[RMDB]
RNA sequence: GGGAACGACUCGAGUAGAGUCGAAAAGCAAAUAAAGAUUUGCUUCGCAGGAGAGAUAGCGCCAUCACCUCUUCUAAGAAGUUAACUAGUGGUGACGGUAUCUCUCCUACGUAGCAAUCCUUAUAUACACGUCCUUCUACUUCGGUAGAAGGACGUGAAAAGAAACAACAACAACAAC
Reactivity to 2A3 in 0.01 (KOAc 150mM, MgCl2 10mM, bicine 150mM(pH8.5), 24C), signal-to-noise 2, nucleotides 027 to 126: g080c020a100a090a000u070a050a070a000g070a030u000u050u150g000c000u020u000c000g010c000a000g000g000a000g000a000g000a000u000a020g160c010g000c000c000a000u000c000a000c000c020u000c000u030u060c050u050a140a130g010a040a000g130u290u080a080a100c110u100a010g010u000g000g000u000g000a000c000g070g090u000a000u000c000u000c020u000c000c000u000a000c000g010u000a000g000c000a010a000u010c000c030u000u120a060u010a010u000a150
Background
Chemical mapping of a 177-nucleotide RNA with 2A3. The reactions ran in a buffer of 150 mM KOAc, 10 mM MgCl2 and 150 mM bicine (pH 8.5), at 24 C. High 2A3 reactivity points to a flexible backbone, as in loops and unpaired stretches. The 2A3 profile rests on 1,276 reads. For 2A3 the reverse transcriptase was SuperScript II with manganese. Source: RMDB library RFM100, as collected in RNAgym.